[RMDB]
RNA sequence: GGGAACGACUCGAGUAGAGUCGAAAAUAUCGUUUCGACGAUAGUAACGCGUACUACGCUUUUGUCUGAUGACCAAGCUACCCACCCAGCUUCCCAAAUAGGAAGCUGGAGGCUUGCAAGGACGGAGCGUAUCGCUAAAGUGCUCGUUCGCGAGCAACUGACUGUAGUCGUUCGCGACUACAGUCAGAAAAGAAACAACAACAACAAC
Reactivity to 2A3 in 0.01 (KOAc 150mM, MgCl2 10mM, bicine 150mM(pH8.5), 24C), signal-to-noise 2, nucleotides 027 to 156: u040a000u000c000g050u000u100u270c300g050a100c010g000a040u000a020g210u280a110a050c080g020c000g030u000a120c010u010a000c030g010c040u030u030u100u300g000u000c010u010g180a210u170g040a220c100c000a000a000g000c030u080a160c100c050c040a010c000c000c000a000g000c000u000u000c000c020c030a210a220a080u250a090g000g000a000a000g010c000u000g000g000a010g000g000c000u000u000g000c010a000a140g010g000a000c010g000g040a000g160c020g000u020a020u300c010g000c000u010a030a170a000g170u150g030c000u000c010g020u060u050c080g050c010g070a000g000c000a000a060
Structure probing data (2A3) for a 207-nucleotide construct. Source: RMDB library RNAMAK, as collected in RNAgym.